[RMDB]
RNA sequence: GGGAACGACUCGAGUAGAGUCGAAAAGGUUAUAGCAGACUAUAGAUUAAUUAGUUGAAAGUUUUGUGUUGUAAUGUAUAGUGUUGGAGAAAGUGAAAGACUUGCGGAAGUAAUUGCCGACAAGUGCUUCCAUUAUAUGAUUCGUCAUAUAAUGGAAAAAAGAAACAACAACAACAAC
Reactivity to DMS in 0.01 (KOAc 150mM, MgCl2 10mM, bicine 150mM(pH8.5), 24C), signal-to-noise 7, nucleotides 027 to 126: g010g010u000u010a030u000a080g010c040a100g000a030c020u010a050u010a190g010a090u010u010a090a120u020u010a080g010u010u000g000a110a140a100g000u000u000u010u010g020u000g010u010u000g010u010a030a030u010g010u010a070u010a090g010u010g000u000u000g010g000a140g010a050a070a080g010u010g010a070a100a110g010a040c010u000u000g000c020g010g000a030a060g010u010a070a080u000u020g010c000c000g000a090c010a010a010g010u000g010c120
Reactivity to 2A3 in 0.01 (KOAc 150mM, MgCl2 10mM, bicine 150mM(pH8.5), 24C), signal-to-noise 2, nucleotides 027 to 126: g030g010u040u050a070u090a070g040c020a010g010a060c010u040a050u100a120g100a080u120u150a120a130u110u120a130g040u030u030g050a080a010a090g040u070u000u150u070g070u020g000u070u000g010u030a050a040u000g040u070a040u160a060g040u000g020u050u070g040g000a050g050a050a030a000g030u060g040a170a080a020g040a100c000u000u000g000c000g000g030a030a010g010u110a030a080u130u300g010c020c000g040a140c000a010a010g000u010g010c000

This 177-nucleotide RNA was probed chemically with DMS and 2A3. The data come from the RNA Mapping Database (RMDB), libraries RFM100 and RFMREP. Values cover nucleotides 27 to 126.